[RMDB]
An RNA of 177 nucleotides, treated with 2A3 and read out base by base. Values cover nucleotides 27 to 126. It was measured as part of the RMDB library OK1LIB. For 2A3 the reverse transcriptase was SuperScript II with manganese. The 2A3 profile rests on 594 reads.
RNA sequence: GGGAACGACUCGAGUAGAGUCGAAAAUGACAAUCGAGAAGGCACGCAGGACGAGCAGCGCGGGGGCCGAGACGGCGUCUCGCACCGCAGCCGUCGCGUCGACCCCGACGUGGUACUGGGGCUGUGGCAGUGCCCGGGAGUUCGCUCCCGGGCACUGAAAAGAAACAACAACAACAAC
Reactivity to 2A3 in 0.01 (KOAc 150mM, MgCl2 10mM, bicine 150mM(pH8.5), 24C), signal-to-noise 1, nucleotides 027 to 126: u140g040a050c050a030a070u140c060g020a040g020a080a020g030g000c040a030c050g040c010a040g000g030a030c020g010a010g030c070a000g030c000g000c010g040g000g000g000g000c120c050g000a010g000a020c130g080g090c000g040u000c010u040c070g040c030a020c000c030g000c000a040g010c000c020g100u060c000g000c010g080u030c000g070a240c000c000c090c000g010a020c000g020u060g090g120u040a050c060u070g040g010g020g060c000u060g000u060g040g010